The record gives the reactivity of an RNA of 177 nucleotides to DMS and 2A3. It was measured as part of the RMDB library OK2TST. Values are in units of 0.01, from 0 to 300, in steps of 10. The RNA was probed in 150 mM KOAc, 10 mM MgCl2 and 150 mM bicine (pH 8.5) at 24 C. DMS (dimethyl sulfate) methylates the pairing face of unpaired adenines and cytosines.
[RMDB]
RNA sequence: GGGAACGACUCGAGUAGAGUCGAAAAUGCUGUGUCAGAACACACCGGGAUUCAUAUGCAGCUCAAUAGAGAAUUAGGCCUACUCAGGCUAUGUGAUAGAAUGUGUUCUUAGAGAGUAGCCCAGCCAUGCGUAAAUAUCGUUCGCGAUAUUUACGCAAAAAGAAACAACAACAACAAC
Reactivity to DMS in 0.01 (KOAc 150mM, MgCl2 10mM, bicine 150mM(pH8.5), 24C), signal-to-noise 4, nucleotides 027 to 126: u000g010c020u000g020u010g010u000c160a100g020a060a040c030a010c030a060c120c040g010g000g000a120u000u010c020a030u000a050u010g000c130a080g010c040u000c030a130a130u000a080g020a060g000a100a080u000u000a160g010g010c030c010u000a110c180u020c150a070g000g020c020u000a010u000g020u000g000a080u000a070g010a100a100u010g030u000g010u000u000c030u000u000a100g000a160g000a060g010u000a080g010c010c010c010a080g000c130c130a130
Reactivity to 2A3 in 0.01 (KOAc 150mM, MgCl2 10mM, bicine 150mM(pH8.5), 24C), signal-to-noise 3, nucleotides 027 to 126: u080g000c000u000g020u050g070u130c020a000g000a060a000c010a000c010a020c070c050g090g070g030a080u060u030c000a020u030a020u140g060c030a060g000c010u000c050a090a300u240a070g040a000g020a010a060u150u070a160g020g000c020c000u060a130c100u150c220a010g000g000c020u040a030u070g020u020g020a030u020a070g070a060a090u060g000u000g000u030u000c010u020u030a070g040a000g010a010g060u050a030g010c030c010c000a000g070c060c000a140